Chemical mapping of a 207-nucleotide RNA with DMS and 2A3.
For DMS the reverse transcriptase was MarathonRT.
For DMS, 3,737 sequencing reads were counted.
It was measured as part of the RMDB library OK3TST.
[RMDB]
RNA sequence: GGGAACGACUCGAGUAGAGUCGAAAAGGGCUAUACCGGGCCCGAUACCGGAAUUAGUAGUUUUCUACGAGAGGCCCAAUCUGCGGCCGAAUGCAGUGUAGGUCGAAUCGAGGACCGAGACUCGAUAAUUACGUCGAUAGAUGGACGAUUACAUCAAAUCGGCAUAAUUAUUCGUAAUUAUGCCGAUAAAAGAAACAACAACAACAAC
Reactivity to DMS in 0.01 (KOAc 150mM, MgCl2 10mM, bicine 150mM(pH8.5), 24C), signal-to-noise 2, nucleotides 027 to 156: g000g000g020c110u000a100u000a110c030c050g000g010g020c060c000c100g000a090u000a110c020c020g030g000a090a130u010u010a040g020u000a050g000u000u000u000u010c050u000a060c040g010a230g020a240g020g000c000c000c020a120a140u000c070u020g010c070g010g000c030c190g020a070a080u010g050c030a030g000u010g010u000a070g000g030u000c010g020a100a100u000c000g030a190g020g000a170c090c090g000a210g010a150c050u010c020g000a030u000a050a080u020u000a130c060g020u000c050g030a150u000a120g000a110u000g010g020a100c050g030a180u000u000a050c040a050u020c030a050a180
Reactivity to 2A3 in 0.01 (KOAc 150mM, MgCl2 10mM, bicine 150mM(pH8.5), 24C), signal-to-noise 3, nucleotides 027 to 156: g000g020g000c080u060a040u030a290c020c010g000g000g000c000c030c070g020a000u000a030c000c000g000g040a120a100u110u010a070g020u000a010g020u130u110u200u090c000u010a020c020g010a020g010a050g210g000c010c000c040a010a070u040c030u020g000c010g110g020c040c140g030a030a020u070g000c010a000g050u040g020u170a040g000g040u010c020g010a010a040u000c000g000a000g030g050a030c090c100g030a020g010a040c020u000c020g020a000u060a110a030u180u100a070c020g000u000c000g000a040u030a100g050a030u070g030g020a000c010g050a060u050u160a070c060a060u070c020a010a160